[RMDB]
RNA sequence: GGGAACGACUCGAGUAGAGUCGAAAACGUCGCCGCGUUCGUCUUCUAUACCGACGACUAUGUGAUCGCCGGUGUCCUGCCCGAGAUCGCCGGUGAUCUCGGGGUGAGUCAGGCCGCGGCGGGCCAACACCGCAUUAGGGUUCGCCCUAAUGCGGUGAAAAGAAACAACAACAACAAC
Reactivity to 2A3 in 0.01 (KOAc 150mM, MgCl2 10mM, bicine 150mM(pH8.5), 24C), signal-to-noise 3, nucleotides 027 to 126: c030g090u010c000g020c000c000g000c000g000u010u060c020g020u050c040u160u000c040u110a100u060a070c010c010g020a010c020g020a010c060u120a170u300g300u120g060a290u010c010g000c000c000g000g020u030g040u060c010c060u100g150c030c010c000g000a010g010a010u030c040g120c220c240g170g060u180g030a000u000c000u000c010g010g000g010g030u030g010a000g040u090c100a020g010g010c000c000g000c000g010g030c040g000g010g010c010c010a030a020
Reactivity to DMS in 0.01 (KOAc 150mM, MgCl2 10mM, bicine 150mM(pH8.5), 24C), signal-to-noise 2, nucleotides 027 to 126: c140g040u000c000g020c000c000g030c030g020u010u000c040g000u000c060u010u000c140u000a090u000a040c020c040g010a020c020g010a020c040u000a140u010g030u030g020a130u000c000g020c000c000g000g010u000g010u000c060c080u000g010c020c010c020g010a020g010a020u000c000g010c180c200g000g030u030g020a010u000c000u000c030g000g000g000g010u000g010a080g010u010c050a080g010g010c120c010g020c010g010g000c010g020g010g000c040c060a090a220